[RMDB]
RNA sequence: GGGAACGACUCGAGUAGAGUCGAAAAUACCGUCUUCUCCCCGACGGUUUCAAUCCAUAGCUUCACGUUGUGUAGAGUAGGUGGAAGGUAUCGUGUGGUGUAUAAACACCACAUAGUCUCUUAGGGGUCAAGCUGAUAAACUUCGGUUUAUCAGCAAUACGAUGACAGCUUUCGAGCUGUCAUCGUAAAAAGAAACAACAACAACAAC
Reactivity to DMS in 0.01 (KOAc 150mM, MgCl2 10mM, bicine 150mM(pH8.5), 24C), signal-to-noise 1, nucleotides 027 to 156: u000a060c010c010g030u000c010u010u000c000u000c010c000c010c180g010a010c020g010g010u010u000u000c070a050a220u030c010c030a130u000a250g000c000u000u000c000a070c040g030u000u020g010u020g030u010a170g010a050g070u000a080g020g070u010g000g000a100a130g010g010u000a050u000c030g010u010g010u000g000g000u000g040u000a180u000a110a110a200c000a010c000c000a000c010a010u010a070g000u000c010u010c020u000u000a090g050g010g010g010u000c050a060a190g000c000u000g030a020u000a010a000a020c000u000u000c300g030g010u000u030u010a010u000c010a030g030c030a050a010
Reactivity to 2A3 in 0.01 (KOAc 150mM, MgCl2 10mM, bicine 150mM(pH8.5), 24C), signal-to-noise 1, nucleotides 027 to 156: u060a010c000c000g000u000c000u120u010c030u060c040c000c000c060g010a030c000g000g000u010u010u070c030a050a030u000c000c010a010u040a060g020c010u040u190c030a020c080g300u300u140g010u060g050u190a070g000a000g030u040a000g000g000u000g010g010a010a040g110g010u030a030u200c060g010u030g000u000g010g000u000g050u020a040u090a300a150a010c000a020c020c000a000c000a000u000a020g030u030c000u000c000u090u050a020g010g000g000g020u060c030a000a060g040c000u000g000a000u010a000a000a000c030u030u020c130g000g030u010u000u000a000u000c000a000g000c000a000a010
Structure probing data (DMS and 2A3) for a 207-nucleotide construct. Reactivities are given for positions 27 through 156. The 2A3 profile rests on 600 reads. For 2A3 the reverse transcriptase was SuperScript II with manganese. DMS adducts were read by reverse transcription with MarathonRT. For DMS, 2,124 sequencing reads were counted.